RNA sequence: GGGAACGACUCGAGUAGAGUCGAAAAGAUAUGGAAUGUGAUAACGCAUGCACGAAUUCGGAAACGAACUAUGCAUGAACUACGUUAAUACAUUCCUAAGUCAAACCGACAACUUCGGUUGUCGGAACAACUUGCUAUUGUUCGCAAUAGCAAGUUGAAAAGAAACAACAACAACAAC
Reactivity to 2A3 in 0.01 (KOAc 150mM, MgCl2 10mM, bicine 150mM(pH8.5), 24C), signal-to-noise 6, nucleotides 027 to 126: g020a010u060a030u110g000g010a000a010u000g010u030g050a080u030a030a010c010g000c070a000u010g010c020a000c100g210a120a300u060u020c010g020g000a030a050a060c010g000a010a010c070u060a060u070g010c010a010u010g040a030a030c120u220a050c100g000u000u030a040a020u040a080c000a000u000u000c000c000u010a100a000g040u010c040a040a050a120c000c010g000a000c000a010a000c000u060u100c240g180g010u000u010g000u010c010g000g010a000a000
Reactivity to DMS in 0.01 (KOAc 150mM, MgCl2 10mM, bicine 150mM(pH8.5), 24C), signal-to-noise 6, nucleotides 027 to 126: g000a030u000a300u000g000g000a000a000u010g010u000g010a070u000a000a000c000g010c000a020u000g010c010a010c170g010a060a180u000u000c010g020g000a100a070a170c010g000a000a030c090u000a140u000g000c010a010u000g010a080a060c160u010a300c010g010u000u000a010a070u000a010c010a010u000u000c000c000u000a020a090g000u000c030a080a120a160c000c000g000a010c000a000a000c000u000u000c190g020g010u000u000g000u000c000g000g010a050a110